[RMDB]
The record gives the reactivity of an RNA of 177 nucleotides to DMS and 2A3. Conditions: 150 mM KOAc, 10 mM MgCl2 and 150 mM bicine (pH 8.5), 24 C.

RNA sequence: GGGAACGACUCGAGUAGAGUCGAAAAUUGAUUUAUUUCCUGCCUCGCAGAAGUAAACCGAAGACCCUUUGAUUUUGCUGAAAGAGAAUCAGAACUAGUCUCCGGAUUUAAUGUAGAAUACAUGGGGCUAGUAGUGGUUUUUCGAAACCACUACUAGAAAAGAAACAACAACAACAAC
Reactivity to DMS in 0.01 (KOAc 150mM, MgCl2 10mM, bicine 150mM(pH8.5), 24C), signal-to-noise 6, nucleotides 027 to 126: u030u020g000a130u020u010u030a050u030u000u000c010c010u010g000c020c020u000c020g020c120a110g010a110a100g020u000a010a020a050c010c010g010a030a020g010a030c010c300c060u000u000u000g000a020u000u000u000u000g010c080u030g020a100a110a220g010a060g010a010a010u000c000a020g000a010a030c090u040a210g010u000c000u000c010c000g000g000a140u000u010u000a030a060u010g010u010a090g020a100a110u010a040c130a050u020g000g000g000g010
Reactivity to 2A3 in 0.01 (KOAc 150mM, MgCl2 10mM, bicine 150mM(pH8.5), 24C), signal-to-noise 7, nucleotides 027 to 126: u040u090g080a030u030u120u130a070u040u070u040c010c010u030g030c020c020u030c040g020c040a040g020a280a010g090u090a030a040a040c010c000g010a020a000g020a040c010c000c000u020u010u010g010a010u000u020u050u140g090c100u110g120a130a170a100g070a020g010a020a020u020c000a010g010a030a030c060u060a070g010u000c010u000c020c000g030g030a030u030u030u060a040a050u050g040u070a040g090a230a050u120a070c060a100u130g000g010g000g000